RNA sequence: GGGAACGACUCGAGUAGAGUCGAAAAAGGUCCUGUCCAGCGCUACAUUGCAGUAAACUGGCCAACGUUGCAGGGCCGUAUAUCCCAGGCACACCAAUGUCAAUUUUAAUCAGUCCUUCAGAUAAUACAGGGUGGGGUCUAGGAAACUGCCGCAUAAAUUGCCUCUAAGGUUCGCCUUAGAGGCAAUAAAAGAAACAACAACAACAAC
Reactivity to 2A3 in 0.01 (KOAc 150mM, MgCl2 10mM, bicine 150mM(pH8.5), 24C), signal-to-noise 2, nucleotides 027 to 156: a000g030g000u020c010c010u010g000u090c100c040a030g000c020g020c020u060a050c070a270u080u230g030c060a070g040u140a080a180a140c050u040g000g000c010c030a080a040c040g080u030u040g000c000a000g000g000g040c000c010g000u000a040u000a000u010c010c000c000a000g030g020c000a000c000a000c040c010a060a180u090g010u010c000a050a020u000u050u130u280a070a180u080c060a040g090u020c010c040u070u120c020a020g030a080u050a150a050u120a260c060a000g090g010g020u080g020g040g010g020u040c020u040a010g020g000a020a160a000c010u070g030c000c000g000c000a040u030a020a290
Reactivity to DMS in 0.01 (KOAc 150mM, MgCl2 10mM, bicine 150mM(pH8.5), 24C), signal-to-noise 1, nucleotides 027 to 156: a050g000g040u000c000c010u000g000u000c060c030a050g010c000g020c030u000a080c020a300u010u010g010c130a110g010u010a090a100a080c070u010g000g000c060c060a040a050c040g000u000u000g020c020a020g000g050g000c020c030g000u000a050u000a140u000c000c010c010a140g020g020c000a040c010a080c070c020a120a090u000g000u000c060a070a070u010u010u010u000a050a240u000c040a160g050u000c070c080u000u000c080a070g010a120u010a030a130u000a120c040a040g010g010g020u000g000g010g020g010u000c010u040a080g030g000a080a050a070c020u000g010c000c030g020c070a050u000a030a030